Chemical mapping of a 207-nucleotide RNA with DMS and 2A3. 2A3 adducts were read by reverse transcription with SuperScript II with manganese. Values cover nucleotides 27 to 156. For DMS, 2,437 sequencing reads were counted. Conditions: 150 mM KOAc, 10 mM MgCl2 and 150 mM bicine (pH 8.5), 24 C. Source: RMDB library OK3TST, as collected in RNAgym.

[RMDB]
RNA sequence: GGGAACGACUCGAGUAGAGUCGAAAAGUGAAGAUAAAGAUAUUCAUGAACAGAACAGUAAGAAGCCUGUUAUGGUCUAUAUCCAUGGGGGAUCUUACAUGGAGGGAACCGGUAACAUGAUUGAUGGCAGCAUUUUGGCCAGCUAUGGGAACGUCAAAAAUUAGGAGUACUUCGGUACUCCUAAUUUAAAAGAAACAACAACAACAAC
Reactivity to DMS in 0.01 (KOAc 150mM, MgCl2 10mM, bicine 150mM(pH8.5), 24C), signal-to-noise 2, nucleotides 027 to 156: g010u020g030a120a070g020a100u000a060a110a070g030a160u000a050u010u000c040a020u000g040a120a150c090a100g000a070a070c050a100g020u000a010a140g000a120a110g020c130c060u000g000u010u000a040u010g040g010u010c040u000a110u010a070u030c020c010a070u020g020g010g000g040g020a260u020c020u000u010a040c040a110u000g040g020a070g030g000g000a040a090c040c020g010g010u010a020a060c040a030u000g030a090u000u000g010a080u000g000g010c040a060g020c090a160u000u020u000u000g020g020c020c030a110g010c060u000a020u000g020g010g010a010a020c090g020u000c060a030a030
Reactivity to 2A3 in 0.01 (KOAc 150mM, MgCl2 10mM, bicine 150mM(pH8.5), 24C), signal-to-noise 1, nucleotides 027 to 156: g050u040g030a040a020g030a120u090a130a120a000g030a030u100a140u200u100c070a060u070g000a040a010c010a080g070a120a060c010a010g010u010a000a060g050a240a000g150c000c000u090g120u170u000a060u050g000g000u040c130u060a180u050a080u170c010c020a000u000g010g000g000g000g000a020u040c000u030u030a060c040a140u000g000g000a020g000g030g000a000a060c030c050g010g040u060a020a050c010a040u000g000a120u060u120g030a020u060g010g000c040a000g000c010a060u130u060u010u010g010g000c050c000a010g020c050u040a020u090g000g000g000a000a040c030g050u050c050a140a130